[RMDB]
RNA sequence: GGGAACGACUCGAGUAGAGUCGAAAAAAAGAGAAAAGGACGAAUCAGGGGACGAUUACAAAAUACUUUGUCAAGUACUGGUUUACAGAAAUAACAUUGAUUAUUGAUUGGUUAUACAUCACUGAACUGCAGGUUACGAAUUCUGGUGUCCAGUGUAAUCUGAGUCUUGAUUCGUCAAGACUCAGAUAAAAGAAACAACAACAACAAC
Reactivity to DMS in 0.01 (KOAc 150mM, MgCl2 10mM, bicine 150mM(pH8.5), 24C), signal-to-noise 2, nucleotides 027 to 156: a080a060a090g010a100g000a050a040a100a120g010g010a070c030g000a160a110u010c060a070g020g010g030g030a150c100g010a090u000u010a190c010a060a070a060a180u000a040c040u000u000u000g000u000c030a070a080g000u010a080c040u000g020g010u000u010u000a250c050a060g010a070a090a050u000a060a050c020a060u000u000g010a120u000u000a050u000u010g020a200u000u010g010g010u000u000a110u000a100c120a060u000c000a000c050u010g030a020a040c030u000g020c030a080g000g030u030u000a170c090g000a100a190u000u010c020u000g000g050u000g020u010c010c000a060g010u000g000u010a100
Reactivity to 2A3 in 0.01 (KOAc 150mM, MgCl2 10mM, bicine 150mM(pH8.5), 24C), signal-to-noise 4, nucleotides 027 to 156: a000a000a000g060a010g020a000a070a050a020g080g020a020c020g020a020a030u050c030a040g010g010g000g030a010c030g020a040u060u090a070c060a000a180a030a050u110a070c040u100u090u090g060u110c060a070a030g010u010a050c020u060g090g000u070u060u090a020c030a010g140a050a110a050u160a060a030c030a070u100u150g050a050u100u160a020u090u110g060a060u050u110g020g000u030u010a060u030a120c030a010u050c000a020c030u030g050a060a010c010u120g040c020a020g030g050u060u130a030c060g050a040a110u180u040c010u030g000g040u040g030u020c020c010a000g000u020g030u080a030